This 207-nucleotide RNA was probed chemically with 2A3 and DMS.
The 2A3 profile rests on 751 reads.
2A3 adducts were read by reverse transcription with SuperScript II with manganese.
For DMS the reverse transcriptase was MarathonRT.
Reactivities are given for positions 27 through 156.
The DMS profile rests on 1,693 reads.
The reactions ran in a buffer of 150 mM KOAc, 10 mM MgCl2 and 150 mM bicine (pH 8.5), at 24 C.
RNA sequence: GGGAACGACUCGAGUAGAGUCGAAAAUUGAAGAGAAGUAAUUCAAAAUCUUGAUCACUGCUGAGCCUUAGACUUAAUUUAGAUGAUACAGAAAGGUAUUGAAGAUAUCAGAACACAGUGGAGUGACUGAGACAGUGUUGAUGAGGAGGCUGAAUGAUAAUACGUGACCUUUCGAGGUCACGUAUUAAAAAGAAACAACAACAACAAC
Reactivity to 2A3 in 0.01 (KOAc 150mM, MgCl2 10mM, bicine 150mM(pH8.5), 24C), signal-to-noise 2, nucleotides 027 to 156: u130u090g020a070a020g050a020g010a090a030g040u110a050a130u040u080c110a070a010a040a090u060c030u060u050g040a020u060c030a050c100u090g040c000u020g040a020g070c060c000u010u070a010g010a050c010u040u080a080a070u130u120u060a070g010a070u160g030a070u090a140c020a020g210a200a080a000g030g000u080a120u090u150g060a040a040g000a030u040a010u140c040a020g040a120a000c050a040c010a020g060u040g080g040a030g010u040g050a050c020u010g010a010g000a000c010a020g030u010g050u060u070g010a040u030g020a000g000g000a020g000g030c000u010g060a020a010u070g030a020
Reactivity to DMS in 0.01 (KOAc 150mM, MgCl2 10mM, bicine 150mM(pH8.5), 24C), signal-to-noise 1, nucleotides 027 to 156: u020u000g010a110a160g010a070g020a050a120g020u000a060a140u010u060c100a080a050a140a090u000c070u000u000g000a100u000c010a040c060u010g000c060u010g000a080g000c020c000u000u020a110g040a150c060u000u000a020a040u000u000u010a060g040a110u000g020a060u000a090c000a140g010a210a010a080g010g060u010a060u010u000g010a110a120g000a100u010a130u000c020a120g000a110a080c020a020c000a070g000u020g010g020a080g080u010g000a060c050u020g000a150g000a030c090a060g020u000g030u000u010g000a100u020g000a070g010g010a100g020g000c020u020g000a060a050u010g010a230